[RMDB]
Chemical mapping of a 207-nucleotide RNA with DMS and 2A3. As a SHAPE reagent, 2A3 marks flexible, mostly unpaired nucleotides at the ribose 2'-OH. The 2A3 profile rests on 1,264 reads. The data come from the RNA Mapping Database (RMDB), library M2RFPK.
RNA sequence: GGGAACGACUCGAGUAGAGUCGAAAAAGACCACCUCUACGGAGGUGGUCAAGUCACGUAGCUAGUACCAGGUUGCAAUACUAGAGCGUUAGUCCUGGGGCGUACGGUGGCAGUACGCUGCCACCGGUAAAACUUGAAUACUUCGGUAUUCAAGUAACGUUAGUUAGCGUUUCGACGCUAACUAACGAAAAGAAACAACAACAACAAC
Reactivity to DMS in 0.01 (KOAc 150mM, MgCl2 10mM, bicine 150mM(pH8.5), 24C), signal-to-noise 1, nucleotides 027 to 156: a180g000a030c020c000a000c000c000u000c000u010a060c220g140g020a030g030g040u000g000g010u000c010a000a010g020u020c100a180c020g050u000a050g000c010u000a010g000u010a050c000c040a040g010g010u010u000g000c010a100a030u000a050c010u000a030g010a300g010c030g000u010u010a040g010u000c010c010u000g000g030g010g010c090g040u000a010c010g030g070u000g000g000c030a070g050u000a080c120g020c020u000g000c020c000a040c000c020g010g010u000a000a110a050a060c020u000u010g000a040a040u000a000c000u000u000c270g050g000u000a000u000u000c000a000a000g040u000a000a050
Reactivity to 2A3 in 0.01 (KOAc 150mM, MgCl2 10mM, bicine 150mM(pH8.5), 24C), signal-to-noise 1, nucleotides 027 to 156: a000g000a000c000c000a020c010c010u000c010u020a070c300g100g000a010g030g010u030g000g000u010c000a000a000g000u010c010a000c030g010u000a020g100c000u000a000g000u030a210c000c010a010g020g030u000u000g010c000a010a000u010a000c000u000a010g000a000g000c080g080u110u120a020g020u060c010c000u010g000g000g020g080c130g090u170a030c010g000g000u000g000g000c000a010g000u020a020c230g000c060u000g000c000c000a010c000c000g000g000u010a000a000a000a030c000u000u000g000a000a000u020a000c020u040u060c220g080g000u010a020u000u010c000a000a000g000u000a090a010

Conditions: 150 mM KOAc, 10 mM MgCl2 and 150 mM bicine (pH 8.5), 24 C.
The DMS profile rests on 2,567 reads.